[RMDB]
RNA sequence: GGGAACGACUCGAGUAGAGUCGAAAACGAAAUGGAGGAGAAAUUACAGCAAUUCAUCAGCUGAAAUUAUAGGUGUAGACACAUGUCAGCAGUGGAAACCGUUUCUAUCAAAAUUAAAGUAUUUAGAGUUAAUUUGGACGUUCGCGUCCAAAUUAACAAAAGAAACAACAACAACAAC
Reactivity to 2A3 in 0.01 (KOAc 150mM, MgCl2 10mM, bicine 150mM(pH8.5), 24C), signal-to-noise 2, nucleotides 027 to 126: c050g060a000a010a010u010g030g030a050g000g110a050g040a080a020a000u120u130a210c050a000g010c020a020a240u220u140c070a120u030c100a010g040c000u000g000a080a000a020u150u110a030u160a000g000g010u030g060u010a100g030a020c030a000c010a010u150g000u010c040a020g000c020a010g040u020g080g020a090a000a000c000c080g020u000u070u000c040u040a170u080c050a130a140a150a070u190u150a160a000a030g110u040a050u090u070u120a070g000a000
Reactivity to DMS in 0.01 (KOAc 150mM, MgCl2 10mM, bicine 150mM(pH8.5), 24C), signal-to-noise 1, nucleotides 027 to 126: c010g000a100a040a060u000g010g000a090g010g000a150g060a030a000a080u000u000a130c000a010g000c090a150a020u000u000c230a020u020c240a250g030c000u000g000a040a000a000u000u110a030u030a070g020g040u000g000u000a060g090a140c080a030c060a030u030g020u000c090a020g000c090a110g130u000g000g000a180a050a040c000c000g000u000u010u000c000u020a150u000c010a020a140a060a070u030u000a210a170a240g060u000a010u000u000u010a000g000a250
Overview
This 177-nucleotide RNA was probed chemically with 2A3 and DMS. The 2A3 profile rests on 718 reads. The DMS profile rests on 1,007 reads. 2A3 adducts were read by reverse transcription with SuperScript II with manganese. Source: RMDB library RFM100, as collected in RNAgym.